[RMDB]
RNA sequence: GGGAACGACUCGAGUAGAGUCGAAAAUUUCUGUUCUUAAAAUUCCUAUUUUUUCAAUGGGAUCAUCAGUUUUACGAAUGCCUGCAGUAUCAAUUAAAUGAAGGGUGAUACCUUGACAAUUAAAAUACUCCAUAGUACGAUUCGUCGUACUAUGGAGAAAAGAAACAACAACAACAAC
Reactivity to DMS in 0.01 (KOAc 150mM, MgCl2 10mM, bicine 150mM(pH8.5), 24C), signal-to-noise 1, nucleotides 027 to 126: u010u010u010c070u000g030u000u000c020u020u000a030a040a220a170u020u000c020c000u000a020u010u000u000u010u010u010c040a060a010u020g030g000g010a030u000c080a000u000c090a060g020u000u000u000u000a050c210g020a080a050u020g030c060c030u020g020c120a110g020u000a050u000c060a070a050u000u000a030a030a020u010g010a070a040g010g000g020u000g000a150u010a070c010c000u000u000g000a050c170a030a100u000u000a020a030a120a070u000a080
Reactivity to 2A3 in 0.01 (KOAc 150mM, MgCl2 10mM, bicine 150mM(pH8.5), 24C), signal-to-noise 1, nucleotides 027 to 126: u040u070u030c000u060g000u150u000c090u110u110a180a260a300a300u010u060c000c000u030a110u060u180u050u000u030u050c050a000a020u150g030g010g010a000u020c030a030u000c020a030g040u040u040u010u240a020c050g000a020a050u020g060c020c000u070g160c000a030g040u020a020u070c030a040a110u080u180a180a100a140u200g120a130a030g030g010g000u020g040a000u000a000c000c020u030u070g070a020c030a020a000u180u300a070a130a000a040u060a080
Chemical mapping of a 177-nucleotide RNA with DMS and 2A3. It was measured as part of the RMDB library OK2TRN. Conditions: 150 mM KOAc, 10 mM MgCl2 and 150 mM bicine (pH 8.5), 24 C.